Source: RMDB library OK1LIB, as collected in RNAgym.
Structure probing data (2A3) for a 177-nucleotide construct.
Values cover nucleotides 27 to 126.
The reactions ran in a buffer of 150 mM KOAc, 10 mM MgCl2 and 150 mM bicine (pH 8.5), at 24 C.
[RMDB]
RNA sequence: GGGAACGACUCGAGUAGAGUCGAAAACGACCGCACCGCCCACAUCAGCCGCAGCUCACGCAUCUUCUGCACCGUGCGCACGUUGGUCCAUGAUCCGAGCGCGGCACUGGUGAACAGAUGCUCGCCGCCGACCAGGAUCCUUCGGGAUCCUGGUCGGAAAAGAAACAACAACAACAAC
Reactivity to 2A3 in 0.01 (KOAc 150mM, MgCl2 10mM, bicine 150mM(pH8.5), 24C), signal-to-noise 1, nucleotides 027 to 126: c060g000a040c000c000g000c040a010c000c020g040c040c020c000a070c000a100u090c040a000g040c030c010g010c050a080g000c020u020c060a090c030g060c000a030u020c010u130u000c030u040g000c030a020c030c030g040u050g030c030g050c000a010c090g010u000u030g060g030u010c080c050a100u240g000a060u110c080c070g040a030g070c000g000c000g060g050c020a000c030u170g000g000u030g000a050a030c040a050g020a020u030g000c000u000c040g020c020c040g010